[RMDB]
RNA sequence: GGGAACGACUCGAGUAGAGUCGAAAACGGGUGGUUCGCCACCCGAAAAGUGUCUGACACGGCCCAUCGGUUGCAGGUCUGCACCAAUCGGUCGGUAAUGGCGCAAAGAGACGCCUUCGGGCGUCUCGUUAGGUUAUGACUUCGGUCAUAACCUAACAAAAGAAACAACAACAACAAC
Reactivity to 2A3 in 0.01 (KOAc 150mM, MgCl2 10mM, bicine 150mM(pH8.5), 24C), signal-to-noise 3, nucleotides 027 to 126: c010g010g000g000u000g000g030u050u060c180g030c030c000a000c020c000c000g010a000a010a000a010g000u010g010u000c010u020g010a020c010a010c220g000g000c000c010c010a010u000c010g040g030u150u150g000c020a030g040g300u240c290u080g000c000a000c000c000a000a020u020c020g010g000u010c020g000g010u040a050a040u130g010g000c020g000c030a090a160a020g010a010g000a010c000g000c020c000u040u070c120g090g010g000c000g010u000c000u000c000
Reactivity to DMS in 0.01 (KOAc 150mM, MgCl2 10mM, bicine 150mM(pH8.5), 24C), signal-to-noise 3, nucleotides 027 to 126: c020g000g010g020u000g010g010u000u030c240g020c010c000a020c000c010c000g010a000a020a100a100g020u000g030u000c010u000g020a290c210a080c010g000g010c000c000c090a010u010c040g010g000u000u000g070c010a040g020g010u030c140u010g020c010a020c030c000a040a010u000c300g000g010u000c010g000g000u000a090a170u000g010g000c010g000c030a040a110a130g010a010g000a010c000g010c000c010u010u010c160g030g020g000c000g020u000c000u000c000